[RMDB]
RNA sequence: GGGAACGACUCGAGUAGAGUCGAAAAUAGUCUGUUGCGUGGUCUGAGCGGUUGGUUGUGGAUUGUUAUCCACUUGCCAAGCUUGCCAGAUCAUGAAAGACACGAACAGCAGAGCGAUGAGUAGAAAAGCUCCCUACUGAUUCGUCAGUAGGGAGCUAAAAGAAACAACAACAACAAC
Reactivity to 2A3 in 0.01 (KOAc 150mM, MgCl2 10mM, bicine 150mM(pH8.5), 24C), signal-to-noise 2, nucleotides 027 to 126: u070a010g000u030c010u050g170u090u070g100c030g010u000g010g020u000c000u000g030a020g050c030g010g070u030u010g000g000u000u050g000u030g010g010a040u030u140g160u300u090a020u000c010c000a000c000u070u130g030c020c000a040a010g090c040u160u300g020c020c000a000g000a000u010c020a000u000g020a010a020a010g080a010c050a040c120g050a100a030c010a010g000c000a000g000a010g080c060g080a120u140g050a040g040u110a040g120a020a020a020
Reactivity to DMS in 0.01 (KOAc 150mM, MgCl2 10mM, bicine 150mM(pH8.5), 24C), signal-to-noise 3, nucleotides 027 to 126: u000a120g020u000c010u010g000u000u000g020c010g070u000g020g000u000c010u000g020a160g030c030g010g010u010u000g020g010u000u000g020u000g010g000a010u000u010g010u010u010a170u000c000c010a020c010u010u010g000c000c010a020a050g010c040u000u010g050c010c000a030g000a000u010c000a000u000g000a080a170a090g010a060c110a130c090g000a080a130c040a030g000c030a050g000a050g000c100g010a090u000g010a100g020u000a090g000a080a070a080